An RNA of 177 nucleotides, treated with DMS and 2A3 and read out base by base. The DMS profile rests on 17,628 reads. DMS adducts were read by reverse transcription with MarathonRT. Conditions: 150 mM KOAc, 10 mM MgCl2 and 150 mM bicine (pH 8.5), 24 C. For 2A3 the reverse transcriptase was SuperScript II with manganese. Reactivities are given for positions 27 through 126.
RNA sequence: GGGAACGACUCGAGUAGAGUCGAAAAGUGCUGAUUGAAAUUCAUGGGAGCCUCUCCAUAAUGGAUGAACGCCGCGGUAGUGCGCGCAGUCGCGACGUAAACGCUCUGUAUUCCCGUUCAGGCCUCAAUAAAUAUGGUCAUUCGUGACCAUAUUUAUAAAAGAAACAACAACAACAAC
Reactivity to DMS in 0.01 (KOAc 150mM, MgCl2 10mM, bicine 150mM(pH8.5), 24C), signal-to-noise 9, nucleotides 027 to 126: g020u000g010c030u000g010a120u000u000g000a090a120a080u000u000c050a040u000g000g010g020a090g010c090c070u000c060u000c010c010a100u000a080a070u010g010g000a050u010g000a110a060c050g020c020c020g020c030g010g000u000a100g020u010g010c040g010c040g010c040a170g000u010c030g000c010g010a030c030g000u000a060a090a100c110g010c020u000c020u000g010u010a190u000u000c000c010c000g020u000u010c100a090g010g010c040c060u000c100a080
Reactivity to 2A3 in 0.01 (KOAc 150mM, MgCl2 10mM, bicine 150mM(pH8.5), 24C), signal-to-noise 4, nucleotides 027 to 126: g060u040g030c010u030g030a190u150u080g030a110a120a080u120u050c030a060u100g030g060g000a040g050c040c010u100c010u010c040c000a040u170a230a070u220g010g030a020u080g040a060a010c030g020c020c010g000c000g050g020u090a080g070u060g090c050g030c000g010c040a010g040u050c030g010c000g010a030c010g020u020a040a120a020c030g000c010u030c000u040g020u030a070u030u020c020c010c010g010u040u040c010a010g040g080c030c030u050c040a030